[RMDB]
RNA sequence: GGGAACGACUCGAGUAGAGUCGAAAAUGGAGUUGAGAUCUCACGUCGAUUGCGGAUACACUGAUGAACAAUGCCGUAACAUUUACUCCACAAUGUUUCAAAGAGACGUUCCAUCUCAUAUGUCGUUGCAGGAAGCGUGGGAAGAGAUAGGCGCACACACACACUUUAGGUUCGCCUAAAGUGUGUGAAAAGAAACAACAACAACAAC
Reactivity to 2A3 in 0.01 (KOAc 150mM, MgCl2 10mM, bicine 150mM(pH8.5), 24C), signal-to-noise 5, nucleotides 027 to 156: u090g030g010a020g030u050u040g100a060g020a120u020c030u020c060a020c030g050u050c040g060a060u020u050g010c020g050g000a030u080a080c080a030c120u160g030a090u100g030a110a020c040a120a140u150g030c000c020g030u040a030a000c000a020u040u100u090a070c050u010c070c010a030c050a030a040u050g020u010u060u080c090a130a130a010g020a020g000a020c030g020u050u030c060c010a060u020c010u010c040a070u060a090u210g080u030c040g080u070u110g010c010a000g050g010a050a020g010c020g010u030g020g020g010a060a040g020a020g010a050u070a090g020g030c030g000c020a010c000a000
Reactivity to DMS in 0.01 (KOAc 150mM, MgCl2 10mM, bicine 150mM(pH8.5), 24C), signal-to-noise 1, nucleotides 027 to 156: u000g010g020a070g010u000u000g010a120g000a120u020c040u010c040a040c160g070u000c010g000a270u000u000g000c100g010g000a120u000a070c010a080c030u000g000a170u000g000a130a110c050a090a070u000g050c000c050g010u000a070a030c010a100u000u000u000a070c030u000c050c060a060c080a060a030u000g000u000u010u010c000a090a100a100g010a160g000a050c070g010u000u000c020c040a090u000c040u010c020a140u000a150u000g000u000c000g010u000u010g010c000a120g020g010a070a040g000c040g060u000g000g000g020a030a130g020a090g000a120u000a100g010g020c030g080c020a050c020a190